[RMDB]
RNA sequence: GGGAACGACUCGAGUAGAGUCGAAAAAGAGAGUGCUAUCAUCCAUGUUUUUCCACUUGCUAUUUUGCUCAGAUCUGGUAGUAGGUAGAACUUCAAGCCCUCGUAUGCGUUUGGUAGUGUAACGCUCUGUUCUGCUCUAGUUCGCUAGAGCAGAACAAAAAGAAACAACAACAACAAC
Reactivity to DMS in 0.01 (KOAc 150mM, MgCl2 10mM, bicine 150mM(pH8.5), 24C), signal-to-noise 2, nucleotides 027 to 126: a070g000a060g020a040g040u010g010c060u000a070u000c080a060u010c010c010a180u000g010u000u010u000u000u000c010c030a050c060u010u000g000c030u000a050u010u000u010u000g030c050u010c170a090g000a070u000c030u000g000g000u000a030g020u000a010g010g020u000a060g000a040a040c100u000u010c080a080a070g010c010c020c010u000c120g010u000a070u000g010c050g010u000u000u000g010g000u000a030g020u000g020u010a050a030c040g010c030u010c120
Reactivity to 2A3 in 0.01 (KOAc 150mM, MgCl2 10mM, bicine 150mM(pH8.5), 24C), signal-to-noise 1, nucleotides 027 to 126: a030g060a000g000a010g050u070g010c010u030a010u100c000a010u000c050c000a040u030g110u090u030u000u010u050c030c020a000c040u020u040g000c020u000a060u050u140u200u090g060c040u120c140a300g000a300u030c020u040g050g000u040a050g020u000a010g050g020u010a040g010a080a040c000u040u060c040a060a030g030c000c000c000u070c050g080u100a020u070g020c010g020u000u030u090g040g000u080a070g040u040g000u130a040a020c020g000c010u000c030

Structure probing data (DMS and 2A3) for a 177-nucleotide construct.
For 2A3 the reverse transcriptase was SuperScript II with manganese.
DMS adducts were read by reverse transcription with MarathonRT.
The 2A3 profile rests on 1,266 reads.
High DMS reactivity at an A or C suggests that its Watson-Crick edge is free.